RNA sequence: GGGAACGACUCGAGUAGAGUCGAAAAAAAAAAAGGUUGCCGAAUCCGAAAGGUACGGAGGAACCGCUUUUGGGGGUUAAUCUGCAGUGAAGCUGCAGUAGGGAUACCUUCUGUCCCGCACCCCUCAGCUAACUCCGGAGGCAAUAAAGGAAGGAGAAUUAAUACGAUGAUUCGUCAUCGUAUUAAUAAAAGAAACAACAACAACAAC
Reactivity to DMS in 0.01 (KOAc 150mM, MgCl2 10mM, bicine 150mM(pH8.5), 24C), signal-to-noise 2, nucleotides 027 to 156: a000a000a000a110a040a040a040g010g000u010u000g010c030c010g010a130a170u020c050c060g000a110a040a100g030g040u000a040c020g000g000a090g010g010a040a080c150c070g040c200u000u000u020u000g020g010g010g000g020u020u000a060a140u020c010u010g000c000a050g020u000g020a180a270g040c020u010g020c000a010g020u010a030g000g010g010a040u010a060c010c050u000u000c080u010g030u010c000c000c020g000c180a110c020c000c000c000u000c110a030g010c030u000a130a200c010u000c000c000g010g010a190g020g010c020a030a040u000a090a060a100g000g010a070a040g020g010a300g000a180
Reactivity to 2A3 in 0.01 (KOAc 150mM, MgCl2 10mM, bicine 150mM(pH8.5), 24C), signal-to-noise 1, nucleotides 027 to 156: a000a000a000a000a000a000a090g080g010u040u010g020c010c010g020a060a050u030c030c000g040a070a070a010g000g000u020a010c000g010g010a000g010g000a070a030c120c030g030c050u070u120u090u110g040g000g000g000g000u000u020a030a030u040c010u010g000c000a010g000u030g270a160a020g090c000u000g000c000a000g000u000a030g000g000g020a000u040a070c000c030u030u020c020u030g000u000c000c000c000g000c020a020c000c010c010c000u000c010a000g000c000u020a020a000c000u000c000c000g000g010a010g000g000c000a000a000u030a040a040a000g030g020a020a000g010g030a060g070a130
This 207-nucleotide RNA was probed chemically with DMS and 2A3. For DMS, 3,356 sequencing reads were counted. The RNA was probed in 150 mM KOAc, 10 mM MgCl2 and 150 mM bicine (pH 8.5) at 24 C. Values cover nucleotides 27 to 156.